Overview: The record gives the reactivity of an RNA of 177 nucleotides to DMS and 2A3. The data come from the RNA Mapping Database (RMDB), library M2PK50. For 2A3, 1,527 sequencing reads were counted. 2A3 adducts were read by reverse transcription with SuperScript II with manganese.
[RMDB]
RNA sequence: GGGAACGACUCGAGUAGAGUCGAAAAUCUAAUGUCUUCGGACAUUAGAAAAGGCGGAGGCUCGCACCUAGCGACCGGCGCAAGGAGGCACGUGACUGCGAAAAAUCACCGAGUUCGCUCGGUGAAAUCUUAAUGAGACGUUCGCGUCUCAUUAAGAAAAAGAAACAACAACAACAAC
Reactivity to DMS in 0.01 (KOAc 150mM, MgCl2 10mM, bicine 150mM(pH8.5), 24C), signal-to-noise 2, nucleotides 027 to 126: u010c000u000a010a020u000g010u000c000u000u000c210g030g000a030c000a000u000u020a000g000a010a050a050a100g020g000c060g010g000a100g010g000c110u000c060g000c050a090c100c110u000a100g020c020g010a050c050c050g000g000c040g000c080a100a090g000g000a070g020g030c020a030c050g010u020g000a100c060u010g020c070g000a040a050a080a100a140u000c010a010c000c000g000a010g000u000u000c210g000c000u000c010g000g010u000g000a010a040a010
Reactivity to 2A3 in 0.01 (KOAc 150mM, MgCl2 10mM, bicine 150mM(pH8.5), 24C), signal-to-noise 2, nucleotides 027 to 126: u000c010u000a000a000u000g000u000c000u010u050c190g110g000a000c010a010u000u030a000g000a000a100a000a000g080g000c030g020g050a030g000g060c070u030c050g000c020a060c030c090u050a050g050c020g060a070c030c080g050g060c020g000c020a020a130g050g010a030g000g040c030a000c100g050u050g020a090c060u050g000c050g050a080a050a010a000a180u030c000a000c010c000g000a000g010u060u100c230g000c100u000c010g000g000u000g010a020a020a000